Annotation: The data come from the RNA Mapping Database (RMDB), library OK1LIB. This 177-nucleotide RNA was probed chemically with DMS and 2A3. The reactions ran in a buffer of 150 mM KOAc, 10 mM MgCl2 and 150 mM bicine (pH 8.5), at 24 C. DMS (dimethyl sulfate) methylates the pairing face of unpaired adenines and cytosines. For DMS, 44,642 sequencing reads were counted.
[RMDB]
RNA sequence: GGGAACGACUCGAGUAGAGUCGAAAAGAGCGUUGGCGUAUAUCGCACUUCUGGCCGGUACCGACCAUGUCCUCGUUGUGGCUUAUUAGCGAAAUAUCGGUUGUCGGAAUGCUAAUAUAUACGGAAAGGGUAUAACUUACUUCGGUAGGUUAUACCCAAAAGAAACAACAACAACAAC
Reactivity to DMS in 0.01 (KOAc 150mM, MgCl2 10mM, bicine 150mM(pH8.5), 24C), signal-to-noise 9, nucleotides 027 to 126: g010a070g010c110g010u010u010g000g000c040g000u000a040u010a030u020c140g010c040a070c130u010u000c020u000g000g000c030c150g010g010u010a060c100c020g000a110c100c070a060u010g000u020c030c030u000c110g020u010u000g010u000g000g010c060u010u010a050u010u010a040g020c030g010a090a070a110u030a080u010c060g010g000u010u020g010u010c040g000g000a040a050u020g010c010u000a040a050u020a040u010a040u020a050c030g000g010a090a100a150
Reactivity to 2A3 in 0.01 (KOAc 150mM, MgCl2 10mM, bicine 150mM(pH8.5), 24C), signal-to-noise 9, nucleotides 027 to 126: g090a010g020c070g010u030u040g040g010c010g010u020a020u010a010u070c060g010c040a030c060u030u000c010u020g040g000c010c010g030g030u040a050c050c020g030a040c020c030a060u100g080u100c010c020u080c060g130u070u140g060u090g060g000c020u100u100a070u100u180a190g030c030g060a070a060a030u130a050u050c020g040g020u040u090g130u100c010g010g010a020a010u030g000c000u000a070a030u100a060u010a010u010a120c030g030g040a080a080a070